[RMDB]
RNA sequence: GGGAACGACUCGAGUAGAGUCGAAAAGCGAUGUGAAGAGUGUAGUCGCCACGAUUGCCGGCAAUGAAUCAAAAACUCGUCUAAUGCUCACCUACGAAUUGUUUGAUUCCAACGAAGAAUCUAUAACCGCCUGCCUGUUUGACAACAGUUAUGAAAACGUAGUUGAAUGAUUCGUCAUUCAACUACGAAAAGAAACAACAACAACAAC
Reactivity to DMS in 0.01 (KOAc 150mM, MgCl2 10mM, bicine 150mM(pH8.5), 24C), signal-to-noise 3, nucleotides 027 to 156: g020c030g020a060u000g000u000g020a110a090g010a160g030u010g020u000a120g030u000c030g030c010c050a070c050g030a140u000u000g020c040c000g020g040c040a100a110u000g000a070a030u000c010a040a030a060a050a010c050u010c010g010u010c080u000a050a090u010g000c050u010c050a080c090c050u000a070c030g000a060a040u000u000g010u000u000u010g000a070u010u000c010c070a090a150c070g020a110a160g010a120a060u000c030u010a100u000a060a040c000c010g030c070c010u000g010c040c020u000g030u010u020u000g010a070c020a040a050c040a070g000u010u000a040u000g000a080a060a090a200
Reactivity to 2A3 in 0.01 (KOAc 150mM, MgCl2 10mM, bicine 150mM(pH8.5), 24C), signal-to-noise 6, nucleotides 027 to 156: g040c030g030a050u070g050u080g100a070a130g050a050g080u060g010u060a050g020u040c020g000c020c030a040c040g050a090u010u120g040c030c000g010g000c030a050a120u150g040a020a040u050c050a020a090a030a020a030c030u020c020g050u020c100u130a110a100u130g050c020u030c050a080c010c020u000a010c030g060a060a080u090u090g060u090u080u040g020a000u020u000c040c010a070a050c100g060a080a100g000a040a030u010c010u040a060u060a130a050c030c040g020c020c000u010g000c010c000u050g050u070u090u130g050a010c010a060a010c000a030g080u190u130a100u180g120a030a220a010a000